[RMDB]
RNA sequence: GGGAACGACUCGAGUAGAGUCGAAAACGAUGCGUACUCCGGACGUGGUCAAAUUUCCAUCUGCUUGCAUGCGGAGGGGGCGCAGAGCAGAGGCAUUUUAUUCACAUCAUCAUCAUCUUUGCCGUCAGGCAGUGAGUGCGUUCGCGCACUCACUGCCAAAAGAAACAACAACAACAAC
Reactivity to DMS in 0.01 (KOAc 150mM, MgCl2 10mM, bicine 150mM(pH8.5), 24C), signal-to-noise 1, nucleotides 027 to 126: c090g000a060u000g000c040g020u000a080c100u000c050c000g000g050a100c080g020u000g010g020u000c020a030a110a180u000u000u020c020c050a150u000c080u010g000c070u000u000g020c160a140u000g000c120g000g020a160g020g020g000g010g000c030g020c000a060g000a060g000c000a080g000a040g010g040c300a010u040u040u000u000a110u020u000c080a030c010a070u000c060a060u020c050a090u000c020a080u090c080u010u000u000g000c030c020g030u030c150a080
Reactivity to 2A3 in 0.01 (KOAc 150mM, MgCl2 10mM, bicine 150mM(pH8.5), 24C), signal-to-noise 1, nucleotides 027 to 126: c020g000a020u070g020c000g030u060a190c030u030c060c070g100g020a030c000g020u090g020g050u040c030a030a090a090u070u050u060c030c080a180u000c040u020g030c010u030u110g060c050a170u060g050c020g000g100a130g100g000g000g010g000c000g000c000a010g000a020g000c030a010g000a010g040g000c030a020u020u040u060u190a070u060u190c040a030c000a100u050c030a010u010c000a000u000c000a010u030c030u050u130u070g000c010c040g000u000c030a000
Structure probing data (DMS and 2A3) for a 177-nucleotide construct. Values cover nucleotides 27 to 126. For 2A3, 1,188 sequencing reads were counted. Conditions: 150 mM KOAc, 10 mM MgCl2 and 150 mM bicine (pH 8.5), 24 C. 2A3 adducts were read by reverse transcription with SuperScript II with manganese. Source: RMDB library OK2TST, as collected in RNAgym.